[RMDB]
RNA sequence: GGGAACGACUCGAGUAGAGUCGAAAAACUAGUAAGUACAGGGGUGAGUUGACCUGUCAUCUAGACUGCUGACCAUCAACUCACCGGUCAGCUGGAUGAUGUCCACAGAGUACGACAUCAGUACUCAGUGAAUUGAGUAGUUCGCUGCUCGAUUCACAAAAGAAACAACAACAACAAC
Reactivity to DMS in 0.01 (KOAc 150mM, MgCl2 10mM, bicine 150mM(pH8.5), 24C), signal-to-noise 9, nucleotides 027 to 126: a130c020u000a020g000u010a080a060g010u050a020c020a030g000g000g000g010u010g000a060g020u000u000g000a050c060c070u010g000u000c010a050u020c020u000a030g010a180c090u010g000c030u000g010a020c010c210a230u020c090a040a050c080u020c070a050c120c060g000g000u000c010a090g000c000u000g000g000a100u010g000a070u020g000u000c010c040a090c200a100g000a040g010u000a020c030g010a120c190a090u040c120a080g000u000a010c010u000c010a140
Reactivity to 2A3 in 0.01 (KOAc 150mM, MgCl2 10mM, bicine 150mM(pH8.5), 24C), signal-to-noise 9, nucleotides 027 to 126: a000c030u030a020g050u090a220a000g040u060a020c020a020g050g040g020g050u060g050a070g020u030u030g050a050c010c040u020g010u000c000a010u020c010u020a030g140a190c060u050g010c010u010g010a000c010c010a040u070c030a030a060c040u030c070a050c030c000g000g000u010c010a010g000c010u020g020g030a060u100g010a020u080g070u040c020c010a080c050a080g020a010g020u030a010c050g080a030c090a150u120c010a040g010u010a010c000u000c020a010
An RNA of 177 nucleotides, treated with DMS and 2A3 and read out base by base. The reactions ran in a buffer of 150 mM KOAc, 10 mM MgCl2 and 150 mM bicine (pH 8.5), at 24 C.